RNA sequence: GGGAACGACUCGAGUAGAGUCGAAAACGAGGUUUUUGAGAGCGUUUUAAUGUUACUUAUGCCGUUUAAAGCGCAAUAAAGCGCAUCAAUUUGUCCGGUAACGCCAUCUGCUUUUUCGGCCGCAAAAGUGGCUUUGGCUUUAGCGACCUGCGUAUGGAAAUAUGCGGAAUUUCGAUUCCGCAUAUUUAAAAGAAACAACAACAACAAC
Reactivity to DMS in 0.01 (KOAc 150mM, MgCl2 10mM, bicine 150mM(pH8.5), 24C), signal-to-noise 2, nucleotides 027 to 156: c050g030a080g020g020u010u000u000u000u000g000a080g000a100g060c000g050u010u010u000u000a000a080u000g020u000u000a050c030u000u000a180u000g030c030c110g020u010u000u010a050a050a080g010c050g050c020a060a140u000a030a030a080g030c020g000c020a110u000c030a000a070u000u010u010g010u010c050c000g040g030u010a060a050c040g000c030c020a060u000c040u010g010c000u000u010u010u020u010c100g010g030c000c040g050c160a060a040a060a080g030u000g040g010c210u000u000u000g020g000c020u000u000u000a080g010c070g000a060c020c040u000g010c030g030u000a100u020g010g000
Reactivity to 2A3 in 0.01 (KOAc 150mM, MgCl2 10mM, bicine 150mM(pH8.5), 24C), signal-to-noise 2, nucleotides 027 to 156: c040g000a050g040g030u010u060u070u150u180g120a080g010a040g010c020g000u030u020u030u060a050a080u060g040u060u060a030c020u070u070a040u170g050c000c000g050u020u030u130a090a070a040g000c030g000c020a030a120u120a150a060a000g000c000g010c040a040u020c020a010a100u030u080u110g050u030c060c010g010g010u030a040a000c030g020c000c010a000u010c030u050g010c000u000u030u020u110u140c080g040g000c050c000g040c090a020a040a100a130g050u040g030g010c000u040u110u010g000g000c000u060u060u040a040g010c020g050a050c000c000u030g040c020g040u080a110u120g050g000
The record gives the reactivity of an RNA of 207 nucleotides to DMS and 2A3. Conditions: 150 mM KOAc, 10 mM MgCl2 and 150 mM bicine (pH 8.5), 24 C. For DMS the reverse transcriptase was MarathonRT.